The record gives the reactivity of an RNA of 177 nucleotides to DMS and 2A3. In probing experiments dimethyl sulfate is read out at A N1 and C N3, which are open when not base-paired. Values cover nucleotides 27 to 126. It was measured as part of the RMDB libraries RFM100 and RFMREP.
RNA sequence: GGGAACGACUCGAGUAGAGUCGAAAACUCUGCUAGCCCGUAAGGGUGUGUACAGAGGGCGACACCUGCCCAGUGCUGGCACGUGAAGCUGGAGUUCAGUUCAGUGAAGCGCCAGUAAACGGCGGGGCGAAAUACUCUGUUUCGACAGAGUAUUUCGAAAAGAAACAACAACAACAAC
Reactivity to DMS in 0.01 (KOAc 150mM, MgCl2 10mM, bicine 150mM(pH8.5), 24C), signal-to-noise 4, nucleotides 027 to 126: c010u000c010u000g020c020u000a300g010c000c010c000g010u030a130a120g000g020g020u000g000u010g000u000a090c000a010g000a030g000g020g010c100g020a170c120a140c020c010u000g010c000c000c070a270g020u000g000c000u000g000g010c000a070c050g020u000g000a100a290g000c000u000g000g010a030g000u010u020c270a140g020u000u000c010a020g000u000g010a210a270g010c040g000c000c000a020g000u000a020a140a120c270g000g010c010g000g000g000g020
Reactivity to 2A3 in 0.01 (KOAc 150mM, MgCl2 10mM, bicine 150mM(pH8.5), 24C), signal-to-noise 8, nucleotides 027 to 126: c000u000c000u000g010c010u010a040g010c000c000c000g060u100a200a220g010g000g000u040g030u030g000u040a060c010a010g000a000g010g010g020c050g030a020c020a050c050c000u010g010c010c010c030a050g000u010g000c000u010g000g000c080a040c220g060u050g090a090a010g000c000u010g020g010a030g030u210u250c100a120g020u030u010c000a010g000u030g160a130a000g000c000g000c000c000a000g000u010a040a180a000c000g000g000c020g000g000g000g000